[RMDB]
RNA sequence: GGGAACGACUCGAGUAGAGUCGAAAAAGUGUUAUUAGAAGACUUAAGAGAUGUAGAAGAUAAACAAGUAUUUGAAGGUAAUGAUUACCACGAAGAAGUAUCAUCUUAUGUAGUAGCACAUGAAAAAGAAUUAUCAAGACUAAGAGAAUUACGUAAGGUCAAUACUUGGAUUCGUCCAAGUAUUGACAAAAGAAACAACAACAACAAC
Reactivity to DMS in 0.01 (KOAc 150mM, MgCl2 10mM, bicine 150mM(pH8.5), 24C), signal-to-noise 4, nucleotides 027 to 156: a100g020u020g010u010u000a050u000u000a130g020a170a130g020a140c110u000u010a050a110g010a080g020a060u000g010u000a060g010a150a100g010a190u010a060a080a100c080a050a120g020u000a070u000u000u000g030a120a090g000g020u010a040a080u010g030a180u010u000a020c030c000a140c060g030a080a100g000a080a110g010u000a080u000c030a110u000c040u000u000a020u000g010u010a040g020u000a040g040c040a040c020a070u000g000a050a060a050a040a130g000a070a080u000u000a060u000c030a010a070g010a080c060u000a070a100g000a150g000a100a080u010u000a060c050g020u000a100a090g000
Reactivity to 2A3 in 0.01 (KOAc 150mM, MgCl2 10mM, bicine 150mM(pH8.5), 24C), signal-to-noise 6, nucleotides 027 to 156: a000g030u020g020u040u000a070u040u070a070g050a200a040g030a050c040u070u080a090a010g010a020g000a050u060g020u070a030g040a130a020g030a100u160a090a090a030c080a100a030g020u040a080u050u100u070g110a140a040g010g000u030a050a040u100g090a020u100u100a040c020c020a010c070g030a020a050g020a030a020g020u060a020u100c030a000u000c010u020u040a060u090g030u010a030g020u010a010g010c010a010c030a070u100g060a060a000a020a020a010g080a020a030u090u040a040u140c040a030a010g030a070c030u070a070a010g060a000g020a100a080u150u080a050c050g050u080a040a000g070